RNA sequence: GGGAACGACUCGAGUAGAGUCGAAAACAUACGGACUUCGGUCCGUAUGAAAGAACCUCAAUUUGACGCAAACUUCCGCGUCAUCGCGAGGAAGCGAGGAAAAAAUCGAGGUGUUCGCACCUCGAAAUCUCCAUGCAUAGUUCGCUAUGCAUGGAGAAAAAGAAACAACAACAACAAC
Reactivity to 2A3 in 0.01 (KOAc 150mM, MgCl2 10mM, bicine 150mM(pH8.5), 24C), signal-to-noise 2, nucleotides 027 to 126: c000a000u010a010c010g000g000a000c000u030u050c210g120g020u000c000c000g000u020a000u000g000a000a000a000g100a070a100c000c000u000c020a040a090u000u030u040g030a010c000g030c020a030a140a300c120u270u080c130c090g000c000g000u000c000a000u000c010g000c040g010a020g050g050a030a010g060c070g110a130g090g040a100a090a020a000a010a010u080c030g000a000g000g010u000g030u020u040c230g040c060a010c010c000u000c010g030a000a000a000
Reactivity to DMS in 0.01 (KOAc 150mM, MgCl2 10mM, bicine 150mM(pH8.5), 24C), signal-to-noise 3, nucleotides 027 to 126: c010a000u000a000c000g000g000a020c000u000u000c210g040g040u000c000c000g020u000a000u020g000a050a080a120g010a070a110c010c000u000c030a060a300u000u000u010g020a010c010g030c010a080a130a160c300u010u020c190c100g000c000g000u000c000a010u000c080g020c300g000a020g010g020a070a080g010c090g010a090g000g010a010a030a040a060a060a090u000c010g020a000g020g010u000g020u000u020c150g000c000a040c000c010u000c000g010a000a020a040
Structure probing data (2A3 and DMS) for a 177-nucleotide construct. For DMS the reverse transcriptase was MarathonRT. The 2A3 profile rests on 2,729 reads. The DMS profile rests on 2,228 reads. Reactivities are given for positions 27 through 126. Conditions: 150 mM KOAc, 10 mM MgCl2 and 150 mM bicine (pH 8.5), 24 C. The data come from the RNA Mapping Database (RMDB), library M2PK50.